[RMDB]
Structure probing data (DMS and 2A3) for a 170-nucleotide construct. DMS adducts were read by reverse transcription with MarathonRT. Reactivities are given for positions 27 through 129. For DMS, 3,263 sequencing reads were counted. It was measured as part of the RMDB library 15KLIB. The 2A3 profile rests on 1,142 reads.
RNA sequence: GGGAACGACUCGAGUAGAGUCGAAAAACUGUAGCAUAACCUCUGGCGUGUUGCAAAGCGGUUUGGUGAAAAUGUCACAUCCCAGUGGAGAUGUUGAGGCUUGUAUGGUUCAGGUUACCUGCGGUAGAAAGUGCGCGCUUCGGCGCGCACAAAAGAAACAACAACAACAAC
Reactivity to DMS in 0.01 (KOAc 150mM, MgCl2 10mM, bicine 150mM(pH8.5), 24C), signal-to-noise 2, nucleotides 027 to 129: a090c080u000g000u000a040g000c180a050u000a150a060c050c040u000c130u070g040g030c170g010u000g000u050u000g020c170a080a060a100g010c080g050g000u000u110u010g030g070u000g000a000a050a180a080u010g050u010c020a100c000a230u020c180c000c010a180g040u000g060g000a080g040a060u030g000u070u000g000a080g000g020c050u030u030g030u030a060u030g000g050u000u000c120a030g040g000u040u000a030c120c010u000g000c110g050g030u030a110g020a070a040a100
Reactivity to 2A3 in 0.01 (KOAc 150mM, MgCl2 10mM, bicine 150mM(pH8.5), 24C), signal-to-noise 1, nucleotides 027 to 129: a030c030u090g000u000a030g020c000a000u000a080a010c000c060u110c030u060g000g000c120g000u000g000u000u120g000c000a000a000a000g000c000g080g130u020u000u010g060g060u020g000a000a000a000a000u070g000u000c000a070c030a020u000c090c000c000a000g050u000g010g020a130g000a040u080g050u140u060g080a070g000g070c040u000u000g190u080a300u230g000g000u080u000c000a000g000g000u000u010a020c000c040u030g000c010g020g040u000a120g000a020a160a000